[RMDB]
RNA sequence: GGGAACGACUCGAGUAGAGUCGAAAAUUCCAUUGACCCACUGCUCGAGGACGUCCUCCCUGUCUCCUCGGUUCUUCUUCGAUCCGGACCGGCUCAUCUCGGCAAAGGGCGGCAGUCCUCAGUACUCGAUCAUUUUAACGUUCGCGUUAAAAUGAUCAAAAGAAACAACAACAACAAC
Reactivity to DMS in 0.01 (KOAc 150mM, MgCl2 10mM, bicine 150mM(pH8.5), 24C), signal-to-noise 2, nucleotides 027 to 126: u000u010c100c090a150u010u000g000a150c000c030c060a120c110u000g010c020u000c080g030a030g020g000a060c040g000u010c010c020u020c000c010c020u010g010u000c060u000c030c040u000c040g010g000u010u000c020u000u000c080u010u010c100g010a070u000c070c050g010g010a070c030c020g020g000c070u010c150a090u010c110u010c070g000g010c120a090a120a050g000g010g000c140g000g000c120a070g000u010c000c030u000c020a040g000u000a110c110u000c110
Reactivity to 2A3 in 0.01 (KOAc 150mM, MgCl2 10mM, bicine 150mM(pH8.5), 24C), signal-to-noise 2, nucleotides 027 to 126: u080u030c030c010a010u030u180g120a090c040c030c020a080c100u040g000c000u040c120g000a010g010g020a060c000g070u050c000c000u000c000c010c010u010g040u020c060u030c010c010u040c030g020g000u040u000c010u120u020c030u100u100c060g080a060u000c000c020g000g010a030c010c000g000g010c010u030c050a180u000c050u020c050g010g030c060a140a060a010g000g000g000c000g020g000c010a020g010u000c000c010u020c000a000g010u040a070c040u030c070
Chemical mapping of a 177-nucleotide RNA with DMS and 2A3. For 2A3 the reverse transcriptase was SuperScript II with manganese. Reactivities are given for positions 27 through 126. For DMS the reverse transcriptase was MarathonRT.